[RMDB]
RNA sequence: GGGAACGACUCGAGUAGAGUCGAAAACAGGAAGCUCCACAGGGCCGGGCUUGCGUCGACGGAAGUCCGGGGCAGGGCGUUGUUCUGGUCAAGGAGGGUCAUUACGUUGACGACAACAACGCCCAUGACACACAAAUGGCUUCGGCCAUUUGUGUGUAAAAGAAACAACAACAACAAC
Reactivity to 2A3 in 0.01 (KOAc 150mM, MgCl2 10mM, bicine 150mM(pH8.5), 24C), signal-to-noise 2, nucleotides 027 to 126: c000a000g100g080a100a020g020c020u040c000c000a060c060a130g030g230g000c000c000g030g000g000c000u010u100g110c020g070u120c190g130a300c020g000g070a020a010g000u030c000c000g000g000g000g000c070a110g020g010g000c000g020u010u010g020u000u030c060u120g010g040u000c040a070a000g000g020a030g160g230g070u110c050a060u170u260a080c200g030u040u040g000a000c050g010a000c010a040a010c000a000a010c010g010c020c000c000a000u000g000
Reactivity to DMS in 0.01 (KOAc 150mM, MgCl2 10mM, bicine 150mM(pH8.5), 24C), signal-to-noise 1, nucleotides 027 to 126: c140a130g130g000a160a100g000c010u000c000c040a120c130a120g020g000g000c000c070g010g030g000c010u010u020g000c060g000u010c190g010a150c020g020g010a070a010g010u000c000c000g000g000g010g010c050a080g000g030g000c040g000u020u000g000u000u050c170u000g020g000u030c000a020a000g000g010a060g010g000g020u000c090a070u010u080a140c180g010u000u010g000a030c000g000a070c300a010a040c000a010a000c010g010c010c000c000a020u000g010
Record summary: Structure probing data (2A3 and DMS) for a 177-nucleotide construct. DMS adducts were read by reverse transcription with MarathonRT. For DMS, 1,583 sequencing reads were counted. For 2A3, 1,064 sequencing reads were counted. Source: RMDB library OK1LIB, as collected in RNAgym.